Conditions: 150 mM KOAc, 10 mM MgCl2 and 150 mM bicine (pH 8.5), 24 C. This 207-nucleotide RNA was probed chemically with 2A3. Values cover nucleotides 27 to 156.
RNA sequence: GGGAACGACUCGAGUAGAGUCGAAAAAGACGGAAACCCAUCGACUGUCACCAGAUGCUGCAUCACCUGAUCACUGAUGGCUCAACGGUAUCCGGCGGUACAACUGAAUACUUGUAGAUGCCUUUUGAAAAGGAGUUCAUCUUCGGAUGAACUCCAAGCCCUUCUAUACGUUCGCGUAUAGAAGGGCAAAAGAAACAACAACAACAAC
Reactivity to 2A3 in 0.01 (KOAc 150mM, MgCl2 10mM, bicine 150mM(pH8.5), 24C), signal-to-noise 2, nucleotides 027 to 156: a010g060a020c080g100g010a070a080a070c000c010c020a030u030c040g110a060c050u050g000u060c030a020c030c020a030g020a100u060g060c030u030g060c010a030u050c030a030c020c030u060g010a030u080c010a030c100u040g000a000u040g040g020c060u080c080a030a050c060g010g020u030a020u020c010c000g040g000c030g000g040u080a020c040a120a030c090u080g080a100a130u060a100c020u060u100g030u040a010g020a050u030g020c010c010u060u090u050u140g060a060a050a020a030g020g000a000g000u000u010c000a000u000c000u010u030c120g080g000a000u010g000a000a010c000u000c000c000a000a000